Conditions: 150 mM KOAc, 10 mM MgCl2 and 150 mM bicine (pH 8.5), 24 C. This 207-nucleotide RNA was probed chemically with 2A3 and DMS. Reactivities are given for positions 27 through 156. It was measured as part of the RMDB library M2RFPK. The 2A3 profile rests on 7,105 reads. For DMS, 4,100 sequencing reads were counted.
RNA sequence: GGGAACGACUCGAGUAGAGUCGAAAAAGGCACUUCGCAAUGUGUGCUCAAACAUUGCUUAUUCAAACACGCUUCACAAUGUGCGACAAAGAAACAUUAUUAUAAGAGCUAAUGUUUUAACAUUGGCAAAACCGAGUUAGCUUCGGCUAACUCGGAACAAUUAAAAGUACUUCGGUACUUUUAAUUGAAAAGAAACAACAACAACAAC
Reactivity to 2A3 in 0.01 (KOAc 150mM, MgCl2 10mM, bicine 150mM(pH8.5), 24C), signal-to-noise 8, nucleotides 027 to 156: a010g160g000c010a000c010u010u010c020g000c000a000a000u000g010u000g000u010g010c100u090c200a050a040a000c000a000u000u000g000c010u090u130a210u150u190c110a040a090a050c060a020c060g020c010u060u090c070a030c020a120a060u040g010u020g020c020g070a060c120a050a150a030g050a030a070a010c010a020u030u110a030u150u110a120u140a300a080g050a020g050c010u000a000a010u000g010u010u070u040u110a080a010c000a000u000u010g070g000c050a050a080a000a020c010c000g000a000g000u000u000a000g000c000u020u040c240g030g000c000u000a000a000c010u000c000g000g000a000a000
Reactivity to DMS in 0.01 (KOAc 150mM, MgCl2 10mM, bicine 150mM(pH8.5), 24C), signal-to-noise 2, nucleotides 027 to 156: a090g020g040c010a030c030u000u000c130g070c040a090a040u000g030u000g030u000g000c010u000c090a100a100a050c040a060u000u000g030c020u000u000a080u010u000c080a100a120a090c080a110c070g010c030u000u010c060a090c120a030a070u010g000u000g020c010g030a270c050a080a090a130g000a150a060a050c010a060u000u000a030u000u000a140u010a080a090g010a240g000c070u000a010a000u000g000u000u000u000u000a030a110c020a020u000u000g020g010c040a030a020a080a100c000c000g000a030g000u000u000a020g010c020u000u010c300g070g010c020u000a000a030c000u000c000g000g030a010a010